The record gives the reactivity of an RNA of 170 nucleotides to DMS and 2A3. The RNA was probed in 150 mM KOAc, 10 mM MgCl2 and 150 mM bicine (pH 8.5) at 24 C.

[RMDB]
RNA sequence: GGGAACGACUCGAGUAGAGUCGAAAACCUCCAGAGGACCCCUUCAGCGAACAGAAGGGCUCCUCCUCCUCGGGAGUAGGCCCGUAGCGAUGGGGAGGGAUGCUAGGAGUUGGGGGAGACCGAAGCGACACUCCAUCGUUCGCGAUGGAGAAAAGAAACAACAACAACAAC
Reactivity to DMS in 0.01 (KOAc 150mM, MgCl2 10mM, bicine 150mM(pH8.5), 24C), signal-to-noise 5, nucleotides 027 to 129: c060c000u030c050c040a110g000a060g030g020a080c240c000c010c020u020u020c000a080g000c060g060a080a020c080a130g030a040a050g020g030g000c210u000c050c000u000c050c050u020c000c000u000c150g040g020g020a070g040u040a090g020g010c040c020c020g020u040a000g000c000g020a010u000g010g000g020g010a080g040g040g000a080u060g000c080u020a120g000g000a100g030u050u040g010g000g000g000g000a100g040a020c060c000g040a100a060g010c100g000a040c130a120
Reactivity to 2A3 in 0.01 (KOAc 150mM, MgCl2 10mM, bicine 150mM(pH8.5), 24C), signal-to-noise 7, nucleotides 027 to 129: c000c000u070c040c040a030g010a030g040g010a040c000c000c000c000u030u010c040a030g030c030g130a060a040c020a080g040a030a030g010g000g000c000u040c000c000u010c000c010u050c000c010u040c030g040g000g020a030g020u090a050g030g100c020c020c020g020u040a030g060c070g030a060u080g000g000g010g010a050g000g020g010a040u120g020c030u050a060g030g000a060g040u070u100g030g000g000g000g000a010g010a010c000c000g030a040a010g040c020g040a010c010a020